[RMDB]
RNA sequence: GGGAACGACUCGAGUAGAGUCGAAAAGAGUACAUAUGCCCAGCCUUACUGAUUCGGCUGGAUGCUUCGUGCAAAUGCUAUGUACGCCUACGUAUAUGUGCGUAGAUGCCUAUAUUUUCUCUCCUGAGAAAAUAUAGAUGCAUACAAAGAGUAUGCACACUACCACCUCAUUCGUGAGGUGGUAGUGAAAAGAAACAACAACAACAAC
Reactivity to DMS in 0.01 (KOAc 150mM, MgCl2 10mM, bicine 150mM(pH8.5), 24C), signal-to-noise 3, nucleotides 027 to 156: g020a070g000u000a050c020a040u000a020u000g050c010c020c000a040g030c000c000u000u020a300c100u020g020a200u000u000c210g050g040c040u000g020g020a130u000g040c030u000u010c280g010u000g010c050a050a070a100u010g010c060u000a060u000g020u010a010c000g000c020c010u000a000c020g030u000a080u000a150u010g010u000g000c040g010u000a050g010a130u000g010c050c040u010a000u000a010u000u000u000u000c020u000c010u000c300c190u080g020a010g000a030a000a000a010u000a000u000a000g010a060u020g000c000a040u000a080c040a070a070a080g000a220g000u000a040u000g000c010a220
Reactivity to 2A3 in 0.01 (KOAc 150mM, MgCl2 10mM, bicine 150mM(pH8.5), 24C), signal-to-noise 5, nucleotides 027 to 156: g070a010g000u000a000c000a010u010a030u240g000c000c000c010a020g000c020c000u220u210a190c120u220g110a290u130u180c050g010g000c000u000g000g010a020u080g000c010u060u160c180g170u200g010c020a060a070a120u150g000c000u010a000u020g000u000a000c010g040c000c010u010a010c010g020u030a050u050a050u290g170u090g050c000g000u010a010g020a130u140g060c010c000u010a000u000a000u000u010u000u000c000u000c000u090c040c190u220g000a000g000a000a000a000a000u010a000u000a000g020a020u060g000c000a000u010a020c020a030a290a020g080a020g000u000a010u010g000c010a020
Chemical mapping of a 207-nucleotide RNA with DMS and 2A3. The RNA was probed in 150 mM KOAc, 10 mM MgCl2 and 150 mM bicine (pH 8.5) at 24 C. It was measured as part of the RMDB library OK3TST. For DMS, 4,230 sequencing reads were counted. DMS adducts were read by reverse transcription with MarathonRT. For 2A3, 3,006 sequencing reads were counted.